Source information:
The data come from the RNA Mapping Database (RMDB), library OK1LIB. The record gives the reactivity of an RNA of 177 nucleotides to 2A3 and DMS. For 2A3 the reverse transcriptase was SuperScript II with manganese. Values cover nucleotides 27 to 126.
[RMDB]
RNA sequence: GGGAACGACUCGAGUAGAGUCGAAAAGAGCUUAAUGCGAACAAAUUGUCUAAGGACAUGACGAAUAUAUGUAUACAUAGUUACAUAACUAGUCAUAUGUUCUAUUCGUCAAUUUGUUCGCAUCAUAGAUAGUAUUCAGAUUCGUUUGAGUGCUAUCAAAAGAAACAACAACAACAAC
Reactivity to 2A3 in 0.01 (KOAc 150mM, MgCl2 10mM, bicine 150mM(pH8.5), 24C), signal-to-noise 9, nucleotides 027 to 126: g090a010g020c050u120u130a050a000u020g000c000g000a000a000c000a000a000a000u000u000g000u000c010u050a020a030g000g000a000c000a010u010g000a000c010g040a080a000u160a010u000a000u070g020u020a030u040a090c110a070u240a100g140u090u010a030c000a000u020a030a050c070u010a040g000u000c010a030u040a110u200g020u000u010c030u100a260u050u070c030g000u000c000a000a000u000u000u000g000u000u000c000g000c000a000u000c000a000u010a010
Reactivity to DMS in 0.01 (KOAc 150mM, MgCl2 10mM, bicine 150mM(pH8.5), 24C), signal-to-noise 9, nucleotides 027 to 126: g010a110g000c090u010u010a120a010u000g010c000g000a000a010c000a000a000a010u000u000g010u000c000u020a100a100g000g010a000c010a030u010g000a020c000g000a130a140u040a290u000a010u000g000u000a020u060a100c180a180u030a130g010u010u010a020c030a010u000a010a060c080u000a170g000u000c020a030u020a080u020g010u000u000c000u000a100u030u030c140g010u000c000a020a000u000u000u000g010u000u000c010g000c000a000u000c080a040u020a080